[RMDB]
RNA sequence: GGGAACGACUCGAGUAGAGUCGAAAAGAUAUGGAAUAUCGUUUCAACAGCCUGUCAUUCGGAAACGAAUGCAGGACAUGAAACCGAUAUUCCUAAGUCAAAAUCGGCACGGUUCGCCGUGCCGAAACCUUAGAUCACGGUUCGCCGUGAUCUAAGGAAAAGAAACAACAACAACAAC
Reactivity to 2A3 in 0.01 (KOAc 150mM, MgCl2 10mM, bicine 150mM(pH8.5), 24C), signal-to-noise 3, nucleotides 027 to 126: g020a000u030a000u070g000g000a000a000u010a000u010c000g010u000u000u050c300a300a230c130a090g010c010c010u180g270u300c010a000u000u000c000g050g020a030a040a030c010g000a010a010u000g020c000a010g030g010a000c020a240u300g000a000a000a020c030c020g030a000u000a000u010u000c000c000u000a010a000g000u000c020a000a000a050a300u020c010g030g000c040a000c000g010g110u070u120c300g070c140c020g000u000g020c000c000g010a000a010a010
Reactivity to DMS in 0.01 (KOAc 150mM, MgCl2 10mM, bicine 150mM(pH8.5), 24C), signal-to-noise 2, nucleotides 027 to 126: g000a030u000a170u010g010g000a000a020u000a000u000c000g000u000u020u000c010a140a050c300a220g010c000c020u000g000u010c030a000u000u020c010g020g000a050a030a110c010g000a040a000u010g010c000a030g000g000a030c080a050u020g020a000a000a010c070c100g030a020u000a000u000u000c000c000u010a010a070g010u000c020a100a050a090a140u010c010g000g000c000a000c020g000g010u000u010c300g010c010c020g020u000g020c000c010g000a040a000a080

Source: RMDB library TTRDES, as collected in RNAgym. An RNA of 177 nucleotides, treated with 2A3 and DMS and read out base by base. For DMS, 1,651 sequencing reads were counted. The 2A3 profile rests on 4,055 reads. Values cover nucleotides 27 to 126. The RNA was probed in 150 mM KOAc, 10 mM MgCl2 and 150 mM bicine (pH 8.5) at 24 C.